Structure probing data (2A3) for a 207-nucleotide construct. 2A3 adducts were read by reverse transcription with SuperScript II with manganese. The 2A3 profile rests on 834 reads.
RNA sequence: GGGAACGACUCGAGUAGAGUCGAAAAACGAGGUCAGAGAUGGUGAGUGACUUGCUCAGAAGCAGGGGUGGCCGGCCCAGGACCUAAACAUAGAUACAUCUGAGCUGACAUCUGUUUCCUUUACCUGGAGGCUGGAGCAUCCCCAGGGUCAGCCAGACGGUACGCAUAAUUUCGAUUAUGCGUACCGAAAAGAAACAACAACAACAAC
Reactivity to 2A3 in 0.01 (KOAc 150mM, MgCl2 10mM, bicine 150mM(pH8.5), 24C), signal-to-noise 1, nucleotides 027 to 156: a010c030g000a030g000g020u050c050a020g020a000g040a140u080g050g020u050g020a090g010u050g040a100c040u020u100g000c000u030c070a070g020a060a000g000c050a000g000g020g000g020u050g000g030c000c000g020g000c000c000c000a010g020g050a030c010c030u090a100a050a080c060a110u180a080g120a050u180a090c030a060u000c020u000g020a020g050c000u000g000a010c000a090u050c020u040g100u010u120u130c040c030u060u150u110a110c010c000u020g040g000a110g100g000c020u070g040g000a020g060c000a060u130c000c000c000c000a010g000g010g030u000c000a010g000c010c010a000g000a000